[RMDB]
RNA sequence: GGGAACGACUCGAGUAGAGUCGAAAAACAUCUAGGCAAAUCCGGAUGUCAUACGUCUGAGAGGUGACGCAUAGCCGAUUGAGGCGAAUUCAGUGAUCCUAUGCUGCCAAGAAAAGCCUCUAGUGAGCACUACGAACUCGUUCGCGAGUUCGUAGUGAAAAGAAACAACAACAACAAC
Reactivity to DMS in 0.01 (KOAc 150mM, MgCl2 10mM, bicine 150mM(pH8.5), 24C), signal-to-noise 3, nucleotides 027 to 126: a040c030a020u000c010u000a060g060g000c140a090a140a110u000c030c040g000g000a020u000g000u000c070a110u020a110c110g010u010c020u000g020a080g030a010g030g020u000g000a030c070g020c090a040u010a140g000c060c040g020a120u010u020g010a110g010g010c030g000a080a070u010u000c060a020g020u020g020a040u000c050c020u000a060u000g010c010u000g020c130c080a120a110g000a050a070a070a120g000c010c020u000c010u010a090g000u030g010a140g030
Reactivity to 2A3 in 0.01 (KOAc 150mM, MgCl2 10mM, bicine 150mM(pH8.5), 24C), signal-to-noise 2, nucleotides 027 to 126: a000c020a020u000c040u140a180g050g030c100a090a070a160u130c030c020g020g000a000u030g040u010c000a050u070a170c040g030u000c010u050g070a030g000a000g040g010u050g030a010c040g000c050a060u050a000g030c060c070g100a080u040u230g100a020g050g020c020g000a000a020u140u100c020a030g010u020g080a040u000c000c000u020a000u080g000c020u000g020c040c030a030a020g070a050a090a020a030g040c030c010u000c010u030a130g090u070g140a040g040